[RMDB]
RNA sequence: GGGAACGACUCGAGUAGAGUCGAAAAAUAAGAUGCAGAUGGAAACAUGCUGUAUACCUGACGCACCGAAUUAACGUUUAAGCGAGAUGUAAGCUCGCCGGAGUUGGGGAGCCACGAUGUGGCUUUUACACAAGGACAUAUUCGUAUGUCCUUGUGUAAAAGAAACAACAACAACAAC
Reactivity to 2A3 in 0.01 (KOAc 150mM, MgCl2 10mM, bicine 150mM(pH8.5), 24C), signal-to-noise 3, nucleotides 027 to 126: a000u230a020a050g030a040u040g000c010a000g020a000u010g030g000a050a060a010c040a000u090g130c020u020g000u030a020u030a000c000c010u020g020a010c020g010c190a090c050c000g020a050a080u150u110a200a100c130g030u010u010u090a000a020g010c020g010a010g000a010u100g170u300a040a100g050c010u000c010g000c000c020g010g000a060g000u030u030g000g000g000g020a000g000c000c000a010c040g120a050u150g020u020g010g000c000u000u000u000u000
Reactivity to DMS in 0.01 (KOAc 150mM, MgCl2 10mM, bicine 150mM(pH8.5), 24C), signal-to-noise 3, nucleotides 027 to 126: a110u020a050a050g040a090u000g010c010a020g000a060u010g010g000a160a060a210c030a000u030g010c000u010g000u000a020u000a120c000c010u000g020a020c030g020c230a120c010c000g000a010a020u000u000a100a140c290g000u010u000u010a060a100g000c000g000a030g000a010u000g000u000a040a030g010c010u000c000g010c010c000g000g010a110g010u000u000g000g020g000g000a110g020c000c000a060c100g030a090u020g000u000g010g000c000u000u000u000u000